[RMDB]
RNA sequence: GGGAACGACUCGAGUAGAGUCGAAAAAUUACGGGCGGCGCAGGUGGAGCUGCGAUCCCUCCGCCCAUCGCGUGCUCUCUCGGUGGCCCAGACGCUGCAAACGGACUGGCGGGCCACCUGCAACGAACCUAUACAACUUGUUCGCAAGUUGUAUAGGAAAAGAAACAACAACAACAAC
Reactivity to DMS in 0.01 (KOAc 150mM, MgCl2 10mM, bicine 150mM(pH8.5), 24C), signal-to-noise 6, nucleotides 027 to 126: a090u010u010a100c130g010g000g000c030g010g010c100g000c100a040g000g020u000g000g010a150g000c020u000g000c030g000a080u010c020c040c020u010c010c010g010c010c010c020a100u010c050g010c060g020u000g000c050u010c070u000c090u000c110g010g010u000g010g020c020c000c010a070g000a170c060g010c020u000g030c180a060a110a140c080g000g000a100c020u000g000g010c140g010g000g000c000c000a010c010c010u000g010c050a070a080c100g000a080a170
Reactivity to 2A3 in 0.01 (KOAc 150mM, MgCl2 10mM, bicine 150mM(pH8.5), 24C), signal-to-noise 7, nucleotides 027 to 126: a000u170u150a090c070g000g000g000c010g010g000c010g000c020a010g000g050u110g080g130a100g080c010u010g000c030g020a060u050c010c000c000u000c000c000g000c010c000c010a030u080c040g050c030g020u040g010c010u020c010u010c020u030c150g000g000u000g000g000c000c000c010a020g020a040c040g020c050u130g060c100a130a080a070c040g040g120a190c030u050g060g070c060g040g060g000c000c000a000c000c000u000g000c000a030a040c020g050a030a060

Conditions: 150 mM KOAc, 10 mM MgCl2 and 150 mM bicine (pH 8.5), 24 C. This 177-nucleotide RNA was probed chemically with DMS and 2A3. For DMS, 7,511 sequencing reads were counted. For DMS the reverse transcriptase was MarathonRT.